[RMDB]
RNA sequence: GGGAACGACUCGAGUAGAGUCGAAAAGAUGAGACUCAACCUGUACUCGAAUAGGUGGGUUAGUUCGAGUACUGACCCUUGUAUACGAGAAUACAAUGUGAAGUUCUCGUACUUCGCAUGUCUCAGAGAUAGGUUACUUGUUCGCAAGUGAUCUAUCAAAAGAAACAACAACAACAAC
Reactivity to DMS in 0.01 (KOAc 150mM, MgCl2 10mM, bicine 150mM(pH8.5), 24C), signal-to-noise 9, nucleotides 027 to 126: g000a130u010g000a020g010a010c010u020c140a120a110c120c090u000g000u000a030c020u000c020g010a100a010u000a030g000g010u010g010g000g000u010u000a040g020u010u010c230g010a140g010u020a020c000u010g000a100c020c010c010u000u010g010u000a040u000a050c040g000a020g000a090a050u010a050c060a080a050u020g010u010g010a050a040g010u010u010c130u020c160g010u020a020c030u000u010c020g010c040a050u010g010u000c000u000c010a060g010a180
Reactivity to 2A3 in 0.01 (KOAc 150mM, MgCl2 10mM, bicine 150mM(pH8.5), 24C), signal-to-noise 9, nucleotides 027 to 126: g060a050u050g000a000g000a010c010u020c060a020a030c010c020u020g000u010a010c000u000c000g010a030a020u030a040g110g020u060g030g040g000u050u050a030g010u010u090c080g060a020g040u050a020c000u010g030a030c000c000c000u010u050g100u010a030u000a010c030g010a000g000a070a010u050a030c050a050a070u060g020u020g050a050a020g010u040u030c080u030c120g010u020a010c010u010u020c010g000c010a010u030g000u000c000u000c010a030g010a000
The data come from the RNA Mapping Database (RMDB), library OK1LIB. The record gives the reactivity of an RNA of 177 nucleotides to DMS and 2A3. Conditions: 150 mM KOAc, 10 mM MgCl2 and 150 mM bicine (pH 8.5), 24 C. Values cover nucleotides 27 to 126. In probing experiments dimethyl sulfate is read out at A N1 and C N3, which are open when not base-paired.